Conditions: 150 mM KOAc, 10 mM MgCl2 and 150 mM bicine (pH 8.5), 24 C. This 177-nucleotide RNA was probed chemically with DMS and 2A3. The 2A3 profile rests on 2,168 reads.

[RMDB]
RNA sequence: GGGAACGACUCGAGUAGAGUCGAAAAACAACACGCUUCGGCGUGUUGUCGACGGUGGAAGCUGAGGACGCGCUUGUGCCGCAGCAGGGAAGCGCAGCGUAAAUCAGAGGUGAUUCGUCACCUCUAAUUGAUCAACACGAUUCGUCGUGUUGAUCAAAAAAGAAACAACAACAACAAC
Reactivity to DMS in 0.01 (KOAc 150mM, MgCl2 10mM, bicine 150mM(pH8.5), 24C), signal-to-noise 4, nucleotides 027 to 126: a020c020a000a010c000a010c000g010c000u000u000c170g060g000c000g050u000g010u000u010g000u000c030g000a110c100g030g020u010g000g000a130a090g020c050u010g010a080g010g000a130c070g040c100g010c060u020u000g000u000g010c020c040g000c050a070g010c060a070g000g000g000a140a050g000c050g010c020a040g000c080g000u010a040a100a090u010c130a040g000a010g000g010u000g000a040u000u000c190g010u000c000a010c000c010u000c010u000a000a040
Reactivity to 2A3 in 0.01 (KOAc 150mM, MgCl2 10mM, bicine 150mM(pH8.5), 24C), signal-to-noise 2, nucleotides 027 to 126: a000c010a000a000c000a000c000g010c000u070u050c250g160g020c010g000u020g000u000u000g000u010c000g030a050c040g010g030u060g030g040a060a000g000c030u020g000a030g070g050a030c020g060c000g000c050u090u140g060u110g040c010c000g000c020a060g040c040a020g010g040g020a040a060g010c050g000c060a020g020c020g060u080a020a070a120u140c090a000g000a010g000g000u000g010a010u030u040c130g030u000c050a010c000c000u010c000u000a000a020